[RMDB]
RNA sequence: GGGAACGACUCGAGUAGAGUCGAAAAUCUGAAGGAGAUGGUCUCGACAUCACGACCGUCGUGGAUUAGUGACGUUGUAUGUCGGUUGUGGGGAGAUCGUGGAUCGCUUUUUGAUCUAUCUUCACAAGGCAUAGCCAGUAUUCGUACUGGCUAUGCCAAAAGAAACAACAACAACAAC
Reactivity to DMS in 0.01 (KOAc 150mM, MgCl2 10mM, bicine 150mM(pH8.5), 24C), signal-to-noise 1, nucleotides 027 to 126: u000c050u020g000a080a080g000g010a020g040a040u030g000g010u000c000u000c000g010a140c030a040u000c090a010c040g000a010c020c020g000u000c040g000u030g000g020a110u070u030a060g020u020g000a010c040g010u000u010g050u000a000u000g010u020c000g030g000u010u000g010u000g000g000g000g000a000g000a000u000c030g020u030g000g000a000u000c000g000c300u000u000u110u080u010g010a000u020c060u000a070u000c040u000u000c020a270c220a150a280
Reactivity to 2A3 in 0.01 (KOAc 150mM, MgCl2 10mM, bicine 150mM(pH8.5), 24C), signal-to-noise 2, nucleotides 027 to 126: u020c030u060g070a140a060g040g040a020g060a100u120g100g030u000c000u000c040g180a130c000a280u080c000a000c000g030a000c040c030g030u030c000g050u050g070g070a160u040u160a250g140u010g110a080c070g050u000u070g110u130a110u140g000u000c020g000g010u000u030g000u000g010g000g010g010a040g040a000u000c020g020u130g030g000a000u000c070g080c250u000u080u000u040u300g030a030u000c000u020a000u000c000u000u030c000a080c070a130a140